RNA sequence: GGGAACGACUCGAGUAGAGUCGAAAAUAUGGGCGCGAGCCACCACGCCCAGCUGGCAGGUGCAAAUUUUUCUAGGCUGUUUAAGUAUUUUCAUGCAUUCUUAAAUUGCAUGUUCUGAGCAUAAAUUAACAUCCUAUUAAUAAUUUUAAUCACGCUCUAAGCUACUAUCUUUCGAGAUAGUAGCUUAAAAAGAAACAACAACAACAAC
Reactivity to 2A3 in 0.01 (KOAc 150mM, MgCl2 10mM, bicine 150mM(pH8.5), 24C), signal-to-noise 2, nucleotides 027 to 156: u300a130u040g000g000g000c010g010c020g060a060g040c060c010a030c060c020a050c040g000c000c010c020a010g070c070u050g060g020c030a030g000g060u050g000c030a030a030a000u050u090u030u040u020c030u020a010g030g000c010u000g070u050u090u090a050a020g010u000a080u020u070u050u050c010a010u000g000c010a020u030u060c040u070u270a300a300a280u050u040g000c000a000u000g000u040u080c030u020g040a020g040c030a050u040a140a200a050u140u090a030a030c010a000u080c000c000u050a080u140u020a090a040u110a070a040u030u150u100u200a050a040u150c050a020c090g020c000u000c050
Reactivity to DMS in 0.01 (KOAc 150mM, MgCl2 10mM, bicine 150mM(pH8.5), 24C), signal-to-noise 1, nucleotides 027 to 156: u010a140u000g000g010g010c020g040c030g060a150g120c040c090a070c070c010a080c000g030c010c030c020a110g020c060u000g000g030c010a080g000g040u000g050c060a040a160a110u010u030u000u030u010c060u050a070g080g050c050u010g010u000u030u000a030a170g040u000a060u000u000u020u010c030a010u010g010c010a020u010u000c170u030u010a080a110a060u000u010g030c010a040u000g000u000u000c040u010g000a150g030c030a150u000a030a050a040u000u000a030a010c040a030u000c030c030u000a130u010u000a040a060u010a030a020u040u010u000u000a060a120u000c020a100c110g010c010u000c030